Structure probing data (DMS and 2A3) for a 177-nucleotide construct.
RNA sequence: GGGAACGACUCGAGUAGAGUCGAAAAUUAAACCGGUACUAUCUAUGCGACUUGAAGCCUCCACGACUCAAAACCGAAAGGGCAUAGAUAGUACCGCAUGAAGGAGGCACGUGCAAAAGAAAAAAAAGAUCCAUAUUAACUUCGGUUAAUAUGGAUCAAAAGAAACAACAACAACAAC
Reactivity to DMS in 0.01 (KOAc 150mM, MgCl2 10mM, bicine 150mM(pH8.5), 24C), signal-to-noise 2, nucleotides 027 to 126: u000u020a030a090a170c060c010g010g010u000a000c000u000a000u000c000u010a010u010g030c000g000a080c110u000u000g000a080a110g000c000c000u000c020c030a300c050g010a040c050u000c040a090a060a140a070c000c010g010a100a080a110g000g030g010c000a000u000a010g000a000u000a010g000u000a000c000c000g010c030a010u000g020a050a080g000g030a010g000g000c010a120c040g050u000g010c020a170a090a090a130g010a000a010a000a040a050a130a100a160
Reactivity to 2A3 in 0.01 (KOAc 150mM, MgCl2 10mM, bicine 150mM(pH8.5), 24C), signal-to-noise 1, nucleotides 027 to 126: u110u040a100a060a010c000c000g000g000u000a000c000u010a000u000c000u000a000u000g020c030g050a050c050u030u050g120a150a000g020c030c000u010c000c010a040c070g040a030c040u050c070a180a270a230a080c010c010g000a070a030a000g000g020g000c010a000u000a000g000a010u010a000g000u000a000c000c000g010c010a000u010g020a120a050g010g000a000g000g000c040a010c010g000u020g010c000a040a040a040a000g090a110a080a040a030a020a000a000a000
Reactivities are given for positions 27 through 126.
The reactions ran in a buffer of 150 mM KOAc, 10 mM MgCl2 and 150 mM bicine (pH 8.5), at 24 C.
The 2A3 profile rests on 1,353 reads.